[RMDB]
RNA sequence: GGGAACGACUCGAGUAGAGUCGAAAAGUAAUUGAAGAGGUUUGGAAAGACCCACCACAGAAGGUAAUAGUCCUGUAUGUUAAACGAGAAGACUUUAGAUAUGAUCCAGAGUACCACGGGACACGUGAAACCCUGUGGGAAGCAGGAGGGACCACCAAGGAUUAAUUAGGUUCGCCUAAUUAAUCCUAAAAGAAACAACAACAACAAC
Reactivity to 2A3 in 0.01 (KOAc 150mM, MgCl2 10mM, bicine 150mM(pH8.5), 24C), signal-to-noise 3, nucleotides 027 to 156: g010u000a000a130u070u040g010a020a020g140a160g040g000u050u070u080g010g020a000a010a030g010a020c020c010c000a000c030c010a010c020a030g060a070a030g010g000u040a030a020u020a100g010u010c000c000u030g010u040a050u030g020u020u110a090a110a040c060g030a030g040a180a040g040a020c010u080u100u120a070g050a100u090a100u210g040a040u030c040c020a020g000a020g100u020a030c010c000a000c010g000g010g030a040c020a020c150g140u130g050a060a040a040c000c000c010u020g010u030g000g010g020a000a000g010c040a010g010g030a020g020g030g020a020c030c010a010c010c020a080
Reactivity to DMS in 0.01 (KOAc 150mM, MgCl2 10mM, bicine 150mM(pH8.5), 24C), signal-to-noise 2, nucleotides 027 to 156: g010u000a070a120u000u000g010a060a030g030a240g000g030u020u010u000g040g020a300a110a080g010a070c010c010c030a060c040c030a120c070a050g010a090a020g010g000u010a060a130u010a140g050u010c020c050u020g010u010a130u000g000u000u010a050a060a130c100g000a190g000a090a120g020a070c060u000u020u000a040g010a120u000a120u000g010a100u000c030c020a060g000a110g020u000a170c050c000a060c020g010g020g000a090c020a070c070g020u000g000a140a090a100c070c020c000u010g020u010g010g020g000a180a080g010c040a060g000g000a110g010g020g010a100c020c040a060c040c030a130